Structure probing data (DMS and 2A3) for a 177-nucleotide construct. Reactivities are given for positions 27 through 126. The reactions ran in a buffer of 150 mM KOAc, 10 mM MgCl2 and 150 mM bicine (pH 8.5), at 24 C. It was measured as part of the RMDB libraries RFM100 and RFMREP.

[RMDB]
RNA sequence: GGGAACGACUCGAGUAGAGUCGAAAAUGUGUGUUCGAGAGGGAAACAGCCCAGACCGCCCGCUAAGGUCCCAAAUUCAGAGCCGAGUGGCAAAGGAUGUGCGUCCGCGCAGACAACCAGGAGGUUGGUCUAUUAAUUCGUUCGCGAAUUAAUAGACAAAAGAAACAACAACAACAAC
Reactivity to DMS in 0.01 (KOAc 150mM, MgCl2 10mM, bicine 150mM(pH8.5), 24C), signal-to-noise 6, nucleotides 027 to 126: u010g000u010g010u010g020u000u000c040g020a100g010a150g020g000g000a100a070a110c120a090g010c050c020c010a070g010a110c080c040g010c110c030c030g020c050u000a050a100g000g000u000c020c010c020a060a070a090u020u020c120a080g000a260g010c030c010g010a290g020u030g000g020c050a050a110a090g000g000a070u010g010u010g000c070g000u010c070c060g000c060g010c040a040g010a110c040a050a060c020c010a100g000g010a180g000g010u000u000g010
Reactivity to 2A3 in 0.01 (KOAc 150mM, MgCl2 10mM, bicine 150mM(pH8.5), 24C), signal-to-noise 6, nucleotides 027 to 126: u120g050u010g020u010g010u040u080c060g020a040g010a080g170g030g010a030a150a050c020a040g070c000c000c010a010g030a030c000c010g010c000c010c010g010c040u050a050a040g050g010u020c010c010c000a030a060a040u150u110c050a040g020a000g100c020c010g030a040g060u070g020g000c010a040a040a020g040g010a040u040g030u040g020c020g080u030c070c060g020c010g000c020a010g020a080c020a030a070c010c010a020g000g050a030g000g000u020u040g020